Structure probing data (DMS) for a 177-nucleotide construct.

[RMDB]
RNA sequence: GGGAACGACUCGAGUAGAGUCGAAAAUAUUAGGGUGUGAGAGUAUCUCUCUCCCAGCCGGUUCGCGCUGCCAUCUUUUUCGACUUUACUUGGGUUAGCUGCGCGAACUGGCUGGCGUUCCCAGCAACAACAUCAAGGUGUUCGCACCUUGAUGUUGAAAAGAAACAACAACAACAAC
Reactivity to DMS in 0.01 (KOAc 150mM, MgCl2 10mM, bicine 150mM(pH8.5), 24C), signal-to-noise 2, nucleotides 027 to 126: u010a050u010u000a160g020g010g020u010g010u010g000a010g010a030g010u010a130u010c070u000c020u000c020u000c030c010c010a010g010c020c000g010g000u000u000c000g010c020g020c020u000g020c040c120a080u010c060u000u010u000u000u000c010g010a060c030u010u000u000a070c140u010u000g000g020g010u000u000a030g010c040u000g010c020g020c010g010a010a020c020u000g000g010c010u000g010g000c000g000u000u000c010c000c010a230g020c140a070a100